[RMDB]
RNA sequence: GGGAACGACUCGAGUAGAGUCGAAAAGGUAGAAACGAAGCCCCGACGAGUAGGCAGGCGUGGAGGUUUGUGACGAAGCCUUGGGAGUGAUCCCGGGUCGAACAGCCUCUAGUGCAGAUCUUGGUGGCUCAACGGAACACUUCGGUGUUCCGUUGAGAAAAGAAACAACAACAACAAC
Reactivity to 2A3 in 0.01 (KOAc 150mM, MgCl2 10mM, bicine 150mM(pH8.5), 24C), signal-to-noise 2, nucleotides 027 to 126: g090g060u180a090g090a170a020a000c050g000a130a000g060c000c000c000c000g000a070c060g000a010g000u120a000g070g140c100a000g030g000c000g000u070g020g000a030g030g000u170u300u240g050u050g040a210c000g020a000a000g160c000c000u110u190g000g000g000a000g020u070g040a100u030c000c000c000g000g000g000u100c090g000a040a000c000a000g000c000c000u000c000u000a000g040u000g000c040a070g000a240u000c030u020u010g000g120u090g120g000
Reactivity to DMS in 0.01 (KOAc 150mM, MgCl2 10mM, bicine 150mM(pH8.5), 24C), signal-to-noise 2, nucleotides 027 to 126: g020g020u000a090g000a120a070a090c130g000a070a130g000c090c000c000c080g040a100c070g020a110g000u000a060g000g000c080a120g040g010c090g020u030g000g000a000g000g030u000u060u050g050u030g010a130c170g030a090a140g000c000c000u010u020g040g010g000a010g000u040g000a140u000c000c000c010g000g020g040u000c020g000a250a020c010a010g030c000c000u000c000u000a000g000u020g000c000a040g000a060u000c000u030u020g000g000u020g000g000
Source: RMDB library RFM100, as collected in RNAgym. This 177-nucleotide RNA was probed chemically with 2A3 and DMS. For DMS the reverse transcriptase was MarathonRT. For 2A3, 568 sequencing reads were counted. For DMS, 2,008 sequencing reads were counted.